[RMDB]
RNA sequence: GGGAACGACUCGAGUAGAGUCGAAAAUCCCCCAUAUCAUUAAUGCUGUUAUUUUGAUAUCAGUCAUCUCUGUUGCGAACUCUGCCCUUUAUGCCGCACCGAGAUUAAUGUGUUCCUUGGCUCAACAGGGUAGUUUUAGUUUCGACUAAAACUACCCAAAAGAAACAACAACAACAAC
Reactivity to DMS in 0.01 (KOAc 150mM, MgCl2 10mM, bicine 150mM(pH8.5), 24C), signal-to-noise 1, nucleotides 027 to 126: u010c020c000c010c100c040a050u000a030u020c000a020u020u030a020a160u010g020c070u000g000u000u000a100u000u010u000u000g000a050u000a050u000c110a040g000u000c200a060u000c060u000c020u030g010u010u000g040c020g000a100a130c070u000c040u010g000c050c020c010u000u000u000a050u010g030c080c000g000c050a070c030c200g000a050g010a080u010u000a020a030u030g010u000g000u000u000c040c020u000u010g000g010c050u000c080a040a080c300a160